[RMDB]
RNA sequence: GGGAACGACUCGAGUAGAGUCGAAAAGAUAUGGACUAGCGACGAUCCACCACAGCGGAUCGGAAACGAUCCGAACUACUGUGUUGGGGAGCUAGUCCUAAGUCAAACUUUCCGUUCGCGGAAAGAAGAAUGCUCAAAAGUUCGCUUUUGAGCAUUCAAAAGAAACAACAACAACAAC
Reactivity to DMS in 0.01 (KOAc 150mM, MgCl2 10mM, bicine 150mM(pH8.5), 24C), signal-to-noise 3, nucleotides 027 to 126: g000a030u000a300u000g000g010a020c000u000a000g000c000g020a040c270g000a030u000c000c000a020c070c010a000c000a010g000c010g000g000a010u010c000g000g000a070a070a190c030g010a020u000c000c000g010a030a010c040u000a300c000u000g010u010g000u000u010g010g020g000g000a020g030c000u000a000g000u000c000c000u000a000a070g020u010c020a110a080a230c010u000u000u000c000c000g000u000u010c200g020c000g020g000a000a010a010g000a130a150
Reactivity to 2A3 in 0.01 (KOAc 150mM, MgCl2 10mM, bicine 150mM(pH8.5), 24C), signal-to-noise 2, nucleotides 027 to 126: g010a020u050a050u120g010g000a010c000u010a000g000c010g300a300c010g000a060u000c000c000a000c030c000a000c000a010g020c020g020g000a000u000c020g000g000a050a050a010c020g000a000u010c000c000g020a040a020c060u260a050c010u110g000u010g000u010u000g000g000g010g000a000g000c000u000a000g000u010c000c000u000a000a000g010u010c000a030a040a100c000u000u000u000c010c000g020u030u040c300g000c000g100g020a000a000a010g000a010a000